[RMDB]
RNA sequence: GGGAACGACUCGAGUAGAGUCGAAAAGUCUUCGGUGCCAGUCCGCUGCACCGAUGUAUUUACGCGGUACGCCCCACCGGCACCAACAACGACACCGCCCUCGUGUGGAUGAAAAUGAACCAGACCCCUUAGACUAGUGCUUCGGCACUAGUCUAAGAAAAGAAACAACAACAACAAC
Reactivity to DMS in 0.01 (KOAc 150mM, MgCl2 10mM, bicine 150mM(pH8.5), 24C), signal-to-noise 1, nucleotides 027 to 126: g030u000c020u000u000c070g040g010u000g020c080c060a050g030u010c150c130g020c100u030g030c010a060c020c010g000a010u000g000u000a030u000u000u000a110c150g010c050g000g010u000a100c100g020c010c020c030c060a090c070c050g000g040c030a030c050c050a040a090c080a100a070c120g010a040c040a060c000c030g000c070c040c070u010c050g030u010g030u000g040g020a060u020g000a070a060a090a000u000g000a200a080c050c070a040g000a260c000c000c020
Structure probing data (DMS) for a 177-nucleotide construct.
It was measured as part of the RMDB library OK2TST.
For DMS the reverse transcriptase was MarathonRT.